RNA sequence: GGGAACGACUCGAGUAGAGUCGAAAAACGCGCAGCCUUACGAGGCUGCGCGAUCAGCAACGCCGUUCGUUGCUGGCGCAUCCGCGAUAACGGAUGAGUUAACUGAUAGAAGGAUGAUAUCGAUGAAGGGCAUAUCUAUAUUCGUAUAGAUAUGCCCAAAAGAAACAACAACAACAAC
Reactivity to DMS in 0.01 (KOAc 150mM, MgCl2 10mM, bicine 150mM(pH8.5), 24C), signal-to-noise 3, nucleotides 027 to 126: a110c010g090c000g110c000a020g000c000c000u010u010a150c160g020a040g010g000c000u000g050c020g020c020g000a010u000c000a010g020c000a010a010c000g010c230c220g010u030u030c020g010u000u000g000c000u000g020g000c070g010c010a010u000c000c000g010c050g010a190u040a080a150c030g000g000a000u000g000a060g020u010u010a080a090c060u010g000a030u020a080g000a120a130g010g020a110u000g010a120u010a060u000c030g020a100u010g000a110a080
Reactivity to 2A3 in 0.01 (KOAc 150mM, MgCl2 10mM, bicine 150mM(pH8.5), 24C), signal-to-noise 2, nucleotides 027 to 126: a010c000g000c000g000c000a030g000c000c000u170u190a200c230g110a000g080g020c000u000g010c030g000c000g000a060u050c000a000g000c000a000a000c020g000c020c060g160u160u300c000g000u000u010g000c010u020g000g000c020g060c000a000u000c000c050g040c020g120a140u050a300a000c000g000g000a000u010g020a020g050u020u110a050a080c000u070g000a100u050a060g100a230a000g100g040a030u050g080a080u170a060u190c050g000a100u000g110a090a130
Structure probing data (DMS and 2A3) for a 177-nucleotide construct. It was measured as part of the RMDB libraries RFM100 and RFMREP. For 2A3, 652 sequencing reads were counted. The reactions ran in a buffer of 150 mM KOAc, 10 mM MgCl2 and 150 mM bicine (pH 8.5), at 24 C.